[RMDB]
RNA sequence: GGGAACGACUCGAGUAGAGUCGAAAACUGGGUGGGCUAUGAUCCUAUAUGUAGGGCAGGCCAAGUCCUUGUUCCACUCCUUCUUGCAGUGGAUCUUGCCGCUUCUCUGAAGAUGAUUGAAAUGCCCACAGCACUUGCAGAGCAAGCAGAAAAGACAGUGAUUAGUGAUAUUCGUAUCACUAAUCACAAAAGAAACAACAACAACAAC
Reactivity to DMS in 0.01 (KOAc 150mM, MgCl2 10mM, bicine 150mM(pH8.5), 24C), signal-to-noise 3, nucleotides 027 to 156: c030u000g000g010g030u000g010g010g060c020u000a110u000g000a050u010c010c020u010a110u000a080u020g010u000a050g010g020g000c030a130g040g000c080c040a040a110g030u020c080c040u050u010g010u000u000c000c000a050c030u000c050c060u000u000c150u020u000g020c070a040g030u010g010g000a030u000c020u000u000g000c030c030g020c010u000u000c020u000c030u000g020a100a070g010a050u000g000a150u010u010g000a090a060a110u000g010c030c000c030a060c040a110g020c030a030c020u000u000g020c020a100g000a120g000c030a040a060g020c000a130g000a100a080a070a120g000a190c070a140
Reactivity to 2A3 in 0.01 (KOAc 150mM, MgCl2 10mM, bicine 150mM(pH8.5), 24C), signal-to-noise 7, nucleotides 027 to 156: c030u030g010g040g040u010g010g000g000c010u030a080u090g010a030u020c010c030u090a090u050a060u300g190u210a040g010g030g000c080a100g090g000c150c030a020a010g040u050c040c040u080u180g070u070u010c000c010a010c010u020c010c030u140u280c080u150u210g000c070a010g000u010g000g010a020u010c020u020u040g020c010c020g020c030u300u130c030u020c010u030g050a070a050g040a130u200g010a040u020u020g010a020a020a010u060g000c000c000c000a000c000a000g000c010a020c010u020u070g000c010a020g040a020g200c010a030a000g000c020a010g150a080a080a020a010g120a040c140a070

The record gives the reactivity of an RNA of 207 nucleotides to DMS and 2A3.
2A3 adducts were read by reverse transcription with SuperScript II with manganese.
DMS adducts were read by reverse transcription with MarathonRT.